[RMDB]
RNA sequence: GGGAACGACUCGAGUAGAGUCGAAAACAACUGAGCCGGUGGCGCGUCAGUGCCGGUAUAUUGUGCUUUAUCAGCGGUUCCAGCCCGAUAUUGCAGGCUUCAGCCAUCAGUACCGCGCACAGGCUGAGCGGUGUACGACAUUCGUGUCGUACACCGCAAAAGAAACAACAACAACAAC
Reactivity to 2A3 in 0.01 (KOAc 150mM, MgCl2 10mM, bicine 150mM(pH8.5), 24C), signal-to-noise 1, nucleotides 027 to 126: c030a000a100c050u120g020a020g060c010c010g090g040u190g100g040c040g030c000g100u060c060a030g010u000g000c010c000g000g060u020a080u020a030u080u190g050u050g020c010u120u040u040a030u080c050a050g020c050g120g000u220u140c080c050a060g050c060c000c000g000a000u020a000u050u060g000c020a040g000g030c000u150u130c030a060g010c000c000a030u090c010a010g000u020a010c010c010g030c020g000c070a010c010a010g020g020c030u020g030a050
Reactivity to DMS in 0.01 (KOAc 150mM, MgCl2 10mM, bicine 150mM(pH8.5), 24C), signal-to-noise 2, nucleotides 027 to 126: c080a090a140c160u000g000a070g010c030c000g000g010u010g010g010c020g010c050g000u020c130a120g010u000g010c030c000g000g010u010a050u000a030u000u010g030u000g020c000u020u000u000a060u020c050a110g040c060g030g000u020u000c100c130a260g040c020c040c070g010a020u000a040u000u000g020c020a100g000g030c050u010u020c130a130g040c010c000a120u000c010a050g000u000a040c050c000g010c160g070c020a030c010a100g000g000c070u000g010a100